[RMDB]
An RNA of 207 nucleotides, treated with 2A3 and DMS and read out base by base.
Conditions: 150 mM KOAc, 10 mM MgCl2 and 150 mM bicine (pH 8.5), 24 C.
Values are in units of 0.01, from 0 to 300, in steps of 10.
Reactivities are given for positions 27 through 156.
The data come from the RNA Mapping Database (RMDB), library OK3TST.

RNA sequence: GGGAACGACUCGAGUAGAGUCGAAAAUCAUCUUCUAGCUUCGUGACAAGUGUCUAUCUUGGUAUCAUCCUUUAGUACUGCCUAUUCAGAGACAUCACAACAAACUUUCCCCGCAGUAAGGCAAGUGAUGGAAAGCCAUUCUAAAAAUGUGCCCAGAGAUGAUUUUAAAUUUCGAUUUAAAAUCAUCAAAAGAAACAACAACAACAAC
Reactivity to 2A3 in 0.01 (KOAc 150mM, MgCl2 10mM, bicine 150mM(pH8.5), 24C), signal-to-noise 4, nucleotides 027 to 156: u080c010a020u010c010u140u020c040u050a030g000c020u070u070c080g070u060g040a040c050a160a080g030u050g040u120c030u040a090u030c030u020u030g040g020u040a050u140c020a040u060c020c030u050u090u070a030g020u060a070c030u020g020c010c010u070a140u080u100c040a020g020a000g030a130c000a030u050c030a030c030a120a090c040a070a160a050c030u020u070u060c020c010c000c020g000c010a000g020u080a070a000g020g000c050a050a010g000u010g050a040u030g000g050a050a010a010g010c010c000a010u040u010c040u050a080a060a030a030a040u030g030u080g030c020c030c010a010g010a000
Reactivity to DMS in 0.01 (KOAc 150mM, MgCl2 10mM, bicine 150mM(pH8.5), 24C), signal-to-noise 3, nucleotides 027 to 156: u000c020a090u000c030u010u000c020u000a120g020c020u020u000c060g000u000g010a090c070a110a120g050u000g020u010c030u010a100u000c030u000u010g020g020u000a070u010c050a060u000c040c040u000u000u010a050g020u000a060c040u000g020c020c030u000a100u000u010c030a090g000a140g020a080c030a050u000c030a080c060a080a100c050a050a050a080c050u010u010u000c020c010c010c060g030c070a120g020u000a060a060g000g020c030a050a110g010u010g020a080u000g000g000a070a040a170g030c010c010a040u000u000c050u000a010a050a120a110a080u010g010u020g010c010c010c040a130g020a300

For 2A3, 3,143 sequencing reads were counted.